The record gives the reactivity of an RNA of 177 nucleotides to 2A3 and DMS. 2A3 adducts were read by reverse transcription with SuperScript II with manganese. The RNA was probed in 150 mM KOAc, 10 mM MgCl2 and 150 mM bicine (pH 8.5) at 24 C. The 2A3 profile rests on 1,559 reads.

[RMDB]
RNA sequence: GGGAACGACUCGAGUAGAGUCGAAAAAGAAAAAGAAAAAGGACCACUCCUGCGGGAGUUAAGGCGAUACGGACAGCCGGGUCCACAGCCAAAAAGAAAAAGAAAAAGAAAAAGAAAAAGAAAAGAAGUAAAUACGUAGUUUCGACUACGUAUUUACAAAAGAAACAACAACAACAAC
Reactivity to 2A3 in 0.01 (KOAc 150mM, MgCl2 10mM, bicine 150mM(pH8.5), 24C), signal-to-noise 2, nucleotides 027 to 126: a000g170a040a040a000a000a010g090a010a060a030a010a000g010g010a010c000c000a000c000u000c000c000u030g000c230g040g000g000a010g020u110u030a070a000g000g000c000g000a030u110a160c080g090g060a010c010a030g010c000c030g010g000g010u020c000c010a000c010a000g020c000c050a070a150a000a000a010g060a020a070a030a030a000g130a000a040a000a000a000g140a020a050a010a030a000g070a020a070a020a020a000g040a000a090a000a000g100a120a000
Reactivity to DMS in 0.01 (KOAc 150mM, MgCl2 10mM, bicine 150mM(pH8.5), 24C), signal-to-noise 2, nucleotides 027 to 126: a070g040a050a080a050a120a120g000a060a050a160a120a060g010g000a010c010c010a100c000u010c000c000u000g050c140g040g000g020a010g000u010u020a040a050g010g010c020g000a090u040a040c210g000g030a060c020a240g010c020c050g010g000g000u000c000c000a040c240a050g030c000c000a020a060a080a070a030g000a040a020a030a070a040g010a090a030a010a000a040g000a000a020a070a090a050g020a070a040a040a050a080g000a050a030a050a060g010a090a150